RNA sequence: GGGAACGACUCGAGUAGAGUCGAAAAACGAGAGUCCCACUGUCCCCACAUUCAGCCCCGUGAAAUUAAUGUACUGGUGCACAAUCCAGUCUCUCCCACAUGAAAGCGAAGUCCCCGUGGAGCUUUAAGUUAUGGAGUAGUUCGCUACUCCAUAACUAAAAGAAACAACAACAACAAC
Reactivity to DMS in 0.01 (KOAc 150mM, MgCl2 10mM, bicine 150mM(pH8.5), 24C), signal-to-noise 2, nucleotides 027 to 126: a080c050g000a120g000a170g000u000c030c010c020a170c090u000g020u000c020c010c030c060a080c100a080u010u000c120a120g010c010c000c050c040g000u020g000a040a090a080u000u000a070a130u030g010u000a040c010u000g010g000u000g000c130a050c230a150a120u000c020c010a060g010u020c050u000c090u000c010c010c010a080c140a060u020g010a060a070a110g010c030g000a110a100g020u000c020c020c010c060g040u010g000g000a120g010c040u000u010u000a050

Overview
An RNA of 177 nucleotides, treated with DMS and read out base by base. It was measured as part of the RMDB library RFMREP. Reactivities are given for positions 27 through 126.